[RMDB]
RNA sequence: GGGAACGACUCGAGUAGAGUCGAAAAAGGUGGCGGCAGCAGCAGCGGCCCGGAGGUGGCAGCGCAACAACAUGCAGCGGCAAGCGCAGGCGUCGGGCAGACGGCGAGCGCAAGCUUUGGGACGGCGUGAAUCGUGCUACUUCGGUAGCACGAUUCAAAAAGAAACAACAACAACAAC
Reactivity to 2A3 in 0.01 (KOAc 150mM, MgCl2 10mM, bicine 150mM(pH8.5), 24C), signal-to-noise 1, nucleotides 027 to 126: a000g140g020u080g060g000c020g010g030c000a010g030c000a010g000c000a040g040c040g030g010c000c020c050g030g020a000g030g030u020g000g010c020a060g020c030g010c000a050a080c010a050a000c010a080u040g010c030a010g020c000g040g000c020a020a140g000c010g000c000a030g110g050c010g070u030c040g030g090g000c080a020g020a050c060g000g020c020g000a000g000c010g000c010a040a010g000c000u050u080u130g040g030g000a030c010g060g000c000g020
Reactivity to DMS in 0.01 (KOAc 150mM, MgCl2 10mM, bicine 150mM(pH8.5), 24C), signal-to-noise 2, nucleotides 027 to 126: a170g020g040u000g000g010c050g000g000c020a060g000c060a060g010c150a110g050c000g000g010c000c020c020g000g000a080g030g080u030g010g020c000a110g000c060g000c070a120a060c200a030a080c230a080u000g000c050a090g020c040g000g000c020a060a180g000c020g070c050a130g000g030c000g000u000c000g020g000g040c040a060g000a030c000g000g000c010g000a180g020c100g000c040a090a140g010c030u030u000u100g020g000g000a160c170g000g050c050g000

About this RNA:
The data come from the RNA Mapping Database (RMDB), library OK1LIB. Chemical mapping of a 177-nucleotide RNA with 2A3 and DMS. High DMS reactivity at an A or C suggests that its Watson-Crick edge is free. Reactivities are given for positions 27 through 126. For DMS, 1,900 sequencing reads were counted. For 2A3, 1,125 sequencing reads were counted. As a SHAPE reagent, 2A3 marks flexible, mostly unpaired nucleotides at the ribose 2'-OH.